[RMDB]
RNA sequence: GGGAACGACUCGAGUAGAGUCGAAAAGAUAUGGAAUAGACUGAGCGAUAAGUCGCUGGUCGGAAACGACCAACGACUUUUGACGCUCUGUCUAUUCCUAAGUCAAAGCUCUUCUUCGGAAGAGCAAGUAAAGACAGAGGUUCGCCUCUGUCUUUACAAAAGAAACAACAACAACAAC
Reactivity to DMS in 0.01 (KOAc 150mM, MgCl2 10mM, bicine 150mM(pH8.5), 24C), signal-to-noise 3, nucleotides 027 to 126: g000a030u000a300u000g000g000a010a010u000a000g000a030c000u000g000a010g020c000g030a150u010a020a010g010u000c010g030c000u010g010g020u010c030g030g000a100a060a170c010g010a010c000c000a000a010c000g000a030c000u000u000u000u010g010a250c120g010c000u000c000u000g000u000c000u000a010u000u000c000c000u000a030a060g000u000c030a140a140a150g000c000u000c010u000u000c000u000u020c230g050g010a020a010g010a020g010c010a000a050
Reactivity to 2A3 in 0.01 (KOAc 150mM, MgCl2 10mM, bicine 150mM(pH8.5), 24C), signal-to-noise 2, nucleotides 027 to 126: g020a000u080a040u150g010g010a020a000u000a010g010a020c030u030g000a000g010c070g080a080u040a300a000g010u000c000g000c000u000g020g010u010c030g010g020a080a060a020c010g020a010c010c010a000a000c010g000a000c000u030u000u030u090g100a060c120g010c000u010c000u000g000u000c000u000a000u000u010c000c000u010a000a000g000u010c020a030a080a050g000c010u010c010u020u020c000u000u110c300g140g000a000a010g020a000g020c000a010a010
This 177-nucleotide RNA was probed chemically with DMS and 2A3.
Reactivities are given for positions 27 through 126.